Background
An RNA of 207 nucleotides, treated with 2A3 and DMS and read out base by base.

RNA sequence: GGGAACGACUCGAGUAGAGUCGAAAAAAUUGGGGUAAAACGGUGGGGGACGAUCCCGUAACAUCCGUCCUAACGGCGACAGACUGCACGGCCCUGCCUCUUAGGUGUGUUCAAUGAACAGUCGUUCUGGCCCCUAAGGCGUUCGCGCCUUAGGGAAUUGAAGGUAGUUAUUCGUAACUACCUUCAAAAAAGAAACAACAACAACAAC
Reactivity to 2A3 in 0.01 (KOAc 150mM, MgCl2 10mM, bicine 150mM(pH8.5), 24C), signal-to-noise 2, nucleotides 027 to 156: a000a040u080u060g010g000g000g030u100a110a120a000a000c040g000g000u030g030g040g010g000g020a050c060g030a050u060c000c000c010g000u000a010a020c010a140u110c020c000g050u060c020c000u010a010a030c070g040g030c030g010a040c020a040g110a110c060u040g000c040a000c040g020g010c050c000c000u050g030c060c040u130c040u050u110a060g000g000u060g010u000g040u050u050c070a130a160u230g000a070a030c020a020g010u030c010g000u020u010c020u040g180g000c000c020c000c010u020a000a000g000g000c040g030u060u050c200g010c010g000c030c010u000u000a000g000g000g000a000a000
Reactivity to DMS in 0.01 (KOAc 150mM, MgCl2 10mM, bicine 150mM(pH8.5), 24C), signal-to-noise 3, nucleotides 027 to 156: a030a080u000u000g010g030g020g000u010a020a070a100a060c040g020g020u000g010g020g040g020g010a110c130g010a090u000c020c010c030g000u000a060a080c050a090u000c020c020g020u000c010c030u000a050a070c130g010g030c040g020a100c050a050g000a090c020u000g020c130a110c050g010g010c030c040c030u000g030c030c030u000c080u000u010a080g020g020u000g020u000g010u000u000c040a080a110u010g000a090a070c040a060g010u010c030g020u000u000c000u010g020g020c090c000c000c000u000a010a010g010g010c000g020u000u010c300g050c020g040c000c000u000u010a010g010g000g000a000a010

Notes:
Values cover nucleotides 27 to 156. As a SHAPE reagent, 2A3 marks flexible, mostly unpaired nucleotides at the ribose 2'-OH.